Notes
Chemical mapping of a 177-nucleotide RNA with 2A3 and DMS. It was measured as part of the RMDB library M2PK50.

RNA sequence: GGGAACGACUCGAGUAGAGUCGAAAAAACAGCUGCUUCGGCAGCUGUUAACGCUCGCGGCUCGAGGGUGCACGAGCCGGACAGCAGCCAGUCCGCGAGCUAUAGCCUUGGAGUUCGCUCCAAGGAAGUCGAAAAAACUAUUCGUAGUUUUUUCGACAAAAGAAACAACAACAACAAC
Reactivity to 2A3 in 0.01 (KOAc 150mM, MgCl2 10mM, bicine 150mM(pH8.5), 24C), signal-to-noise 2, nucleotides 027 to 126: a000a000c010a010g000c020u010g000c000u060u080c170g110g000c020a000g010c010u000g000u010u000a000a000c040g010c000u000c000g000c000g020g000c030u000c060g130a250g040g010g040u020g020c020a020c170g110a120g140c100c020g030g040a040c060a060g010c000a020g160c030c000a010g000u000c000c000g000c000g010a000g030c000u080a110u150a140g040c000c010u000u000g010g000a010g000u020u080c090g120c100u010c000c000a000a000g000g000a000a020
Reactivity to DMS in 0.01 (KOAc 150mM, MgCl2 10mM, bicine 150mM(pH8.5), 24C), signal-to-noise 2, nucleotides 027 to 126: a030a010c000a010g020c010u000g010c010u000u010c160g020g010c000a010g030c000u000g010u000u000a040a090c230g010c010u000c000g010c030g010g020c030u000c060g000a110g000g000g000u000g000c010a190c080g020a130g050c130c080g000g000a050c120a150g010c000a040g020c010c000a170g000u000c020c010g000c000g010a030g000c010u000a020u010a100g010c000c000u010u010g000g000a030g000u010u010c210g020c000u000c000c000a000a020g030g010a010a060
The 2A3 profile rests on 1,997 reads. Reactivities are given for positions 27 through 126.